[RMDB]
RNA sequence: GGGAACGACUCGAGUAGAGUCGAAAAGAUGUGGGGCAUCAUAUACAGCUAAUGAUGUCGAAGUCCAAUCAUCUGGCAUGAUUAAGCCAAAUGCUCUUCUUUGUGCUACUUGCCCCUUUGCUAAGGGACAGUAUGUUGACUUCGGUCAACAUACUGUAAAAGAAACAACAACAACAAC
Reactivity to 2A3 in 0.01 (KOAc 150mM, MgCl2 10mM, bicine 150mM(pH8.5), 24C), signal-to-noise 2, nucleotides 027 to 126: g020a040u060g010u090g040g060g000g010c000a000u000c010a000u100a020u020a090c070a040g000c020u070a080a020u010g030a000u040g010u010c010g010a060a010g060u020c030c000a020a070u100c010a000u020c020u020g060g000c020a020u040g060a140u170u070a050a000g010c020c020a040a090a030u120g000c050u050c020u170u040c000u020u050u040g040u040g040c010u030a080c040u040u060g010c010c010c000c060u010u040u070g030c040u070a030a030g010g040g000
Reactivity to DMS in 0.01 (KOAc 150mM, MgCl2 10mM, bicine 150mM(pH8.5), 24C), signal-to-noise 3, nucleotides 027 to 126: g010a030u010g010u010g020g010g020g000c000a010u000c020a010u010a100u000a150c210a090g020c090u010a140a060u000g000a030u000g030u000c020g010a110a110g000u000c060c050a090a120u000c030a010u000c040u000g000g020c040a030u010g000a100u010u000a100a060g010c160c020a060a050a090u000g000c120u000c080u000u000c040u000u000u010g010u000g000c030u000a070c100u010u000g000c050c000c000c020u000u000u010g010c090u010a210a130g000g000g010